[RMDB]
RNA sequence: GGGAACGACUCGAGUAGAGUCGAAAAGAGAGGCUACUUGCGGACCUUUCUGUGGCUGUCGUGUUAAGUGUGAUUCUAUGAAGACACUUCACACACAACCACAGGAAGUUUUGCAUGGUAGCCAUGAUCUUUGUGUGCCAUUCGUGGCACACAAAGAAAAAGAAACAACAACAACAAC
Reactivity to DMS in 0.01 (KOAc 150mM, MgCl2 10mM, bicine 150mM(pH8.5), 24C), signal-to-noise 1, nucleotides 027 to 126: g000a100g000a140g010g020c010u000a000c000u000u010g000c020g010g030a010c030c000u000u000u000c000u040g000u000g010g000c030u000g000u000c240g040u000g020u000u000a000a000g000u000g040u000g010a200u000u020c050u050a240u020g020a020a030g000a020c000a030c000u000u010c070a000c010a000c000a030c000a020a060c000c000a020c020a000g010g000a000a030g010u000u010u000u000g000c000a000u040g030g050u010a000g010c040c010a000u010g010a070
Reactivity to 2A3 in 0.01 (KOAc 150mM, MgCl2 10mM, bicine 150mM(pH8.5), 24C), signal-to-noise 5, nucleotides 027 to 126: g160a000g020a040g000g000c000u010a010c010u030u020g000c000g000g010a020c000c020u000u000u010c000u000g020u000g000g000c010u000g020u110c150g000u040g000u000u010a000a000g000u000g020u000g130a300u060u070c140u150a200u300g050a030a020g040a010c000a000c000u000u010c000a000c000a000c000a000c000a000a020c000c000a000c000a000g000g000a000a000g000u000u000u000u010g020c010a040u080g020g020u000a000g000c000c000a000u030g000a010